[RMDB]
RNA sequence: GGGAACGACUCGAGUAGAGUCGAAAAACGCAGUUCGCUGCGUGCUAUUCCUAAGUCCAGCCGUUUGACGACAUUUGUCAGCUGUCCAUCGGAAACGAUGGGCAGCUUGGAUUUAAUGUCCGAGGCUGGAUAUGGACCCCGUCUCUUUCGAGAGAAAAACAGUGUUAUCGUUCGCGAUAACACUGUUAAAAGAAACAACAACAACAAC
Reactivity to DMS in 0.01 (KOAc 150mM, MgCl2 10mM, bicine 150mM(pH8.5), 24C), signal-to-noise 3, nucleotides 027 to 156: a030c020g010c000a030g010u000u000c300g040c020u010g020c010g030u000g010c090u000a160u000u000c010c010u010a060a170g010u000c000c000a010g020c000c020g020u000u010u000g030a140c130g010a010c000a030u000u000u000g010u010c010a030g000c000u000g020u000c010c000a020u010c000g020g000a210a100a250c010g010a030u000g020g000g000c000a000g010c000u000u020g010g010a020u000u010u010a030a020u000g010u010c000c020g000a090g020g040c000u000g000g000a010u000a030u000g000g020a100c200c000c000c050g000u010c000u000c010u000u010u020c200g030a050g000a050g010a010a110a130
Reactivity to 2A3 in 0.01 (KOAc 150mM, MgCl2 10mM, bicine 150mM(pH8.5), 24C), signal-to-noise 4, nucleotides 027 to 156: a000c000g000c020a020g020u080u140c190g070c170u000g000c010g000u020g000c010u110a170u150u090c010c000u030a060a020g020u000c010c000a000g000c020c020g110u180u290u270g090a090c050g000a000c000a000u010u020u010g020u010c000a000g000c000u000g000u010c000c000a000u000c000g070g020a140a040a050c000g000a000u000g000g010g010c000a000g000c000u000u010g000g000a000u060u010u300a020a010u000g000u000c010c020g020a020g000g010c000u000g000g000a000u000a000u000g000g010a020c000c000c020c010g050u010c010u000c000u030u160u210c270g090a030g020a010g030a110a020a030